The record gives the reactivity of an RNA of 177 nucleotides to DMS and 2A3. The DMS profile rests on 12,263 reads. Reactivities are given for positions 27 through 126. The RNA was probed in 150 mM KOAc, 10 mM MgCl2 and 150 mM bicine (pH 8.5) at 24 C.
RNA sequence: GGGAACGACUCGAGUAGAGUCGAAAAGUCACAAGAAUGCUUGAAAAGCAUGAAUACGCUAAGCGUGUUGAAGUGAGCAUGGUCAGCGACUAUAUGUUCAUGAAGGACUCUCCAGUAACUGACAACACGUAGUAAUGAGCUUCGGCUCAUUACUACGAAAAGAAACAACAACAACAAC
Reactivity to DMS in 0.01 (KOAc 150mM, MgCl2 10mM, bicine 150mM(pH8.5), 24C), signal-to-noise 6, nucleotides 027 to 126: g020u000c000a040c120a090a050g010a140a030u000g000c000u000u010g030a150a110a130a100g010c010a000u010g000a090a080u010a050c030g030c030u040a150a080g010c030g010u000g020u000u000g000a090a190g000u010g000a010g010c050a040u000g020g010u000c010a110g010c240g020a030c030u020a080u030a050u010g010u000u000c030a040u010g020a110a150g000g000a040c010u010c070u020c040c040a060g000u020a070a120c050u000g010a100c070a050a080c150a160
Reactivity to 2A3 in 0.01 (KOAc 150mM, MgCl2 10mM, bicine 150mM(pH8.5), 24C), signal-to-noise 9, nucleotides 027 to 126: g010u010c010a020c020a160a050g090a110a020u030g010c010u110u170g140a100a120a040a020g000c000a000u030g030a020a020u100a020c030g000c120u160a140a080g020c010g000u020g060u020u030g040a110a060g020u020g010a000g010c030a020u030g040g000u040c050a050g110c050g140a020c020u040a030u030a030u290g020u000u010c030a020u070g050a060a050g070g010a010c000u020c020u010c050c000a020g040u090a110a100c050u080g090a050c030a070a020c030a060